[RMDB]
Structure probing data (2A3 and DMS) for a 207-nucleotide construct. The DMS profile rests on 2,259 reads. The reactions ran in a buffer of 150 mM KOAc, 10 mM MgCl2 and 150 mM bicine (pH 8.5), at 24 C. For 2A3 the reverse transcriptase was SuperScript II with manganese.
RNA sequence: GGGAACGACUCGAGUAGAGUCGAAAAGACGUGGAGGUUCCGCGCCCUCCUUUGCGCGUAAGUACGUCGAAAUUCGGUGCUUGGGAUCGCACCGUUCGAUCCAUUUGAUAUCCGCUUGGUGCCGCGGUUGGGCAUUUACACUUACCCGAAAGGGGAACAGUAUGAGUCGUUUCGACGACUCAUACUGAAAAGAAACAACAACAACAAC
Reactivity to 2A3 in 0.01 (KOAc 150mM, MgCl2 10mM, bicine 150mM(pH8.5), 24C), signal-to-noise 3, nucleotides 027 to 156: g000a010c030g020u060g020g030a020g030g110u130u060c040c020g000c010g000c020c010c000u090c000c030u030u060u090g080c020g010c010g010u050a070a040g030u020a080c090g030u030c030g020a070a060a040u160u080c030g000g000u010g000c030u060u140g100g030g030a060u110c030g000c010a020c040c010g010u030u010c010g000a040u000c050c050a090u040u040u190g120a040u050a070u090c000c010g010c040u030u050g000g020u070g050c020c040g060c060g040g000u090u020g040g010g000c060a020u050u040u040a060c060a010c010u040u070a070c030c010c000g030a030a020a000g000g020g000g000a060a030
Reactivity to DMS in 0.01 (KOAc 150mM, MgCl2 10mM, bicine 150mM(pH8.5), 24C), signal-to-noise 1, nucleotides 027 to 156: g040a050c000g040u000g040g010a030g000g010u020u020c020c040g040c020g030c010c040c040u010c020c010u000u000u010g000c060g000c050g040u000a040a120g070u000a070c040g010u000c040g020a060a080a200u000u010c050g050g000u000g000c030u020u000g020g010g000a140u000c140g020c010a180c010c060g000u000u040c020g000a070u030c050c030a240u000u010u000g000a100u000a110u020c060c000g000c050u000u000g000g060u010g000c020c030g010c000g010g000u000u010g000g030g000c060a080u000u000u000a050c130a060c050u010u010a120c010c030c020g000a070a060a210g010g050g000g000a070a150